[RMDB]
RNA sequence: GGGAACGACUCGAGUAGAGUCGAAAAGAUAUGGACCACAUAAGACAGAGCUAUGUGGCUUGGAUUUAGUGUCGGAAACGACACUUGUCAGCCACAACAAUGCUCAAUGACGUGUGGUCCUAAGUCAAAGUUCAAAAGGGUUCGCCCUUUUGAACAACCCUUCCUAAUUCUUCGGAAUUAGGAAGGGAAAAGAAACAACAACAACAAC
Reactivity to 2A3 in 0.01 (KOAc 150mM, MgCl2 10mM, bicine 150mM(pH8.5), 24C), signal-to-noise 5, nucleotides 027 to 156: g040a010u090a030u140g000g000a010c010c000a000c010a000u070a070a090g100a100c110a030g110a010g030c030u050a040u130g000u010g000g010c040u100u180g140g000a080u300u300u200a020g000u000g000u000c000g000g010a040a090a040c010g000a000c000a010c000u010u010g000u000c000a010g010c000c020a010c020a050a020c030a050a100u210g010c000u010c030a040a190u090g020a030c070g000u000g000u000g010g010u000c000c000u010a040a000g000u000c040a150a040a020g010u000u000c000a000a000a000a000g060g000g000u040u080c180g200c010c000c020u000u000u000u000g000a000a000c000a010a000
Reactivity to DMS in 0.01 (KOAc 150mM, MgCl2 10mM, bicine 150mM(pH8.5), 24C), signal-to-noise 1, nucleotides 027 to 156: g000a150u000a270u000g040g010a010c000c030a020c020a000u000a080a300g010a270c050a130g030a040g010c000u020a150u070g010u080g000g000c000u000u000g010g000a010u000u000u000a020g000u000g010u010c000g010g010a260a150a280c010g000a010c000a000c000u000u000g000u000c010a120g000c000c000a020c000a290a090c130a010a180u010g040c000u010c000a150a120u000g000a090c150g100u000g030u000g020g060u000c000c000u000a010a000g000u000c000a110a110a250g000u000u000c000a020a000a030a020g030g040g000u000u000c300g030c010c000c000u000u020u000u000g060a040a020c000a010a110